[RMDB]
RNA sequence: GGGAACGACUCGAGUAGAGUCGAAAAAACUGGGCCUCGGAUCGGGAUUGGGCAUCGGCCAGCAUGGCAUCGGCACGCUGGCGGGCCUCGGCGACCGUGGCGUCGGCGGUGUGUCGGGCCUCACCGACAUCCUGCGUAUGUUCGCAUACGCAGGAUGAAAAGAAACAACAACAACAAC
Reactivity to 2A3 in 0.01 (KOAc 150mM, MgCl2 10mM, bicine 150mM(pH8.5), 24C), signal-to-noise 2, nucleotides 027 to 126: a000a000c050u080g000g050g000c050c020u020c030g040g060a100u030c020g010g050g000a070u070u090g040g040g020c040a080u060c050g070g000c010c000a030g080c040a100u080g030g010c020a180u120c060g060g000c020a010c010g020c000u030g080g030c000g000g010g010c000c010u020c010g030g020c100g120a150c110c010g010u030g010g000c030g090u090c000g030g070c020g030g040u020g000u010g000u020c000g000g000g020c000c020u010c000a060c010c000g030a030
Reactivity to DMS in 0.01 (KOAc 150mM, MgCl2 10mM, bicine 150mM(pH8.5), 24C), signal-to-noise 2, nucleotides 027 to 126: a070a040c070u000g020g010g010c050c020u000c070g000g000a130u010c020g020g000g020a160u010u000g010g010g020c060a090u010c070g020g020c000c020a060g020c070a110u010g030g010c030a100u020c080g030g010c010a020c040g000c000u000g010g000c000g020g000g010c000c000u000c060g030g010c130g010a080c050c000g010u010g000g000c000g010u000c020g020g000c010g000g010u000g010u000g010u010c000g000g000g000c040c030u010c130a110c010c010g010a120
An RNA of 177 nucleotides, treated with 2A3 and DMS and read out base by base. DMS adducts were read by reverse transcription with MarathonRT. The 2A3 profile rests on 2,756 reads. The RNA was probed in 150 mM KOAc, 10 mM MgCl2 and 150 mM bicine (pH 8.5) at 24 C. 2A3 adducts were read by reverse transcription with SuperScript II with manganese. It was measured as part of the RMDB library OK2TST.